[RMDB]
RNA sequence: GGGAACGACUCGAGUAGAGUCGAAAAACAUAUUACGAUAUGAUUCAGAUGGUGUCUUACUGGUUCGAACCAAGGGACAUAAUGGUUUCUUGUUUCCAACCAAAGAACAAGUGGCGAGCCUGAAUAAAAAACUGACUGCCGUUCGCGGCAGUCAGAAGCUUUGAUCUAAGUUCGCUUAGAUCAAAGCAAAAGAAACAACAACAACAAC
Reactivity to 2A3 in 0.01 (KOAc 150mM, MgCl2 10mM, bicine 150mM(pH8.5), 24C), signal-to-noise 3, nucleotides 027 to 156: a000c070a030u190a050u150u180a080c110g070a050u070a030u160g030a050u070u080c060a070g070a160u100g060g050u090g060u070c020u040u060a090c040u070g020g000u000u030c020g000a010a010c010c000a000a010g020g000g020a000c010a010u210a110a140u210g180g000u000u000u000c000u000u000g010u000u010u000c000c010a010a010c000c000a000a190a000g030a050a010c020a100a020g040u020g060g020c040g020a040g040c020c010u020g020a040a030u130a070a060a040a010a000a010c000u010g000a010c000u000g000c070c000g030u040u060c300g010c000g090g000c010a000g010u000c000a000g000a010a000